[RMDB]
RNA sequence: GGGAACGACUCGAGUAGAGUCGAAAACGUCCGGCCAUUUAAGGGAGCCAGGCGACCUAAACGGUCGUGUCAUAUGUAGGCACCAGGUGCCUUCUCCCUGUGGCAAACCGCAGGCUCGGAGGGUCCGUCAACGCAGGCGCUUCGGUGCUUGCGUUGAAAAAGAAACAACAACAACAAC
Reactivity to DMS in 0.01 (KOAc 150mM, MgCl2 10mM, bicine 150mM(pH8.5), 24C), signal-to-noise 3, nucleotides 027 to 126: c060g000u010c010c010g010g000c000c010a030u010u020u030a030a020g000g000g010a050g010c130c060a040g010g000c000g000a000c000c000u010a070a130a100c190g000g010u000c020g010u020g020u020c110a100u050a080u030g030u000a020g010g000c000a010c020c150a100g000g010u010g010c000c000u000u010c010u000c010c000c010u000g010u010g000g000c020a030a060a300c040c140g000c300a270g000g000c050u000c070g000g000a280g000g000g000u000c000c000g000
Reactivity to 2A3 in 0.01 (KOAc 150mM, MgCl2 10mM, bicine 150mM(pH8.5), 24C), signal-to-noise 2, nucleotides 027 to 126: c030g080u000c020c010g000g000c020c010a020u040u050u040a030a020g000g000g000a010g020c020c010a010g030g000c000g010a020c000c010u030a160a070a030c060g010g020u010c000g000u020g030u000c000a010u090a060u250g060u100a050g000g000c000a000c000c020a030g010g100u020g010c000c000u010u000c010u020c000c000c000u010g000u000g010g000c000a050a040a010c030c020g000c080a080g000g000c070u020c080g000g050a000g010g000g000u000c010c000g000